The record gives the reactivity of an RNA of 177 nucleotides to 2A3 and DMS. Reactivities are given for positions 27 through 126. High 2A3 reactivity points to a flexible backbone, as in loops and unpaired stretches. Source: RMDB library OK1LIB, as collected in RNAgym. For DMS the reverse transcriptase was MarathonRT.

RNA sequence: GGGAACGACUCGAGUAGAGUCGAAAACUGAGCAGAUCGUCGGCUAGUGUUGCCGCGGCCGUACAGUCGCCGGUGCGGGCCAGUGCGUCGGCCAGGCGGACCGUCAAUCCUUUGGCGCCGGCAUGGAACUUUGGAUCUCGUUCGCGAGAUCCAAAGUAAAAGAAACAACAACAACAAC
Reactivity to 2A3 in 0.01 (KOAc 150mM, MgCl2 10mM, bicine 150mM(pH8.5), 24C), signal-to-noise 3, nucleotides 027 to 126: c010u090g070a030g020c010a020g030a110u060c030g100u000c020g050g000c020u080a090g090u040g080u300u140g040c030c000g020c020g000g000c000c000g070u150a100c020a070g090u050c030g030c000c000g000g010u110g080c020g010g000g090c030c000a060g010u100g090c000g020u040c030g030g000c010c000a030g000g070c000g030g040a090c030c010g010u010c030a030a190u120c040c010u170u100u080g060g000c040g000c020c000g000g030c010a040u080g050g030a040
Reactivity to DMS in 0.01 (KOAc 150mM, MgCl2 10mM, bicine 150mM(pH8.5), 24C), signal-to-noise 1, nucleotides 027 to 126: c060u020g030a150g000c060a110g000a040u000c070g000u000c000g010g030c010u030a060g020u000g010u000u000g000c100c000g000c120g000g000c060c000g000u000a040c040a030g010u020c030g000c030c030g000g000u000g010c000g020g000g000c110c040a010g000u080g080c190g000u000c000g000g000c000c040a170g000g030c010g020g010a000c050c060g000u000c070a120a060u010c090c070u000u010u000g000g000c030g000c000c060g000g000c000a130u070g000g000a130